[RMDB]
RNA sequence: GGGAACGACUCGAGUAGAGUCGAAAAUGGAAAAUGAUCUAUACUUCUGAAGCAGUAGAUGGAUUUUGGGUAUAUGCCAUAAUAAUUUGGGACGCAAAGAAAAGGCAAAAGAAACAUAACAAUGCCAGGCCUUUGACAUCUUCUGCAUUUUACCUCAAGUCAGUCUGAUAUUCGUAUCAGACUGACUAAAAGAAACAACAACAACAAC
Reactivity to DMS in 0.01 (KOAc 150mM, MgCl2 10mM, bicine 150mM(pH8.5), 24C), signal-to-noise 3, nucleotides 027 to 156: u010g020g010a090a040a100a110u000g000a050u000c040u000a050u000a120c040u010u000c050u010g000a130a120g020c060a030g040u000a020g010a080u000g030g030a120u000u010u000u000g070g030g020u010a110u000a110u000g020c000c040a050u000a040a090u010a080a160u010u010u000g040g020g030a110c100g020c090a070a120a110g010a090a020a040a030g050g030c010a030a020a080a070g010a160a050a060c040a070u000a090a100c130a060a100u000g000c020c000a140g020g040c040c050u000u010u000g000a050c030a030u000c010u000u000c030u000g010c020a140u000u000u000u000a120c080c000u010c050a110
Reactivity to 2A3 in 0.01 (KOAc 150mM, MgCl2 10mM, bicine 150mM(pH8.5), 24C), signal-to-noise 4, nucleotides 027 to 156: u080g010g030a020a050a000a080u090g050a070u050c090u120a090u090a210c070u120u080c030u150g060a110a010g000c000a000g000u020a000g000a010u000g040g000a050u030u010u030u090g040g040g030u070a100u020a020u180g050c020c010a010u030a120a060u170a080a070u140u060u060g020g030g040a050c080g020c140a030a040a040g070a020a080a010a000g020g000c000a030a080a010a070g060a030a070a020c030a030u130a120a040c070a130a050u060g070c000c030a040g100g000c000c000u000u020u050g010a000c000a000u000c000u040u000c010u000g010c010a020u000u030u070u050a080c010c020u050c070a010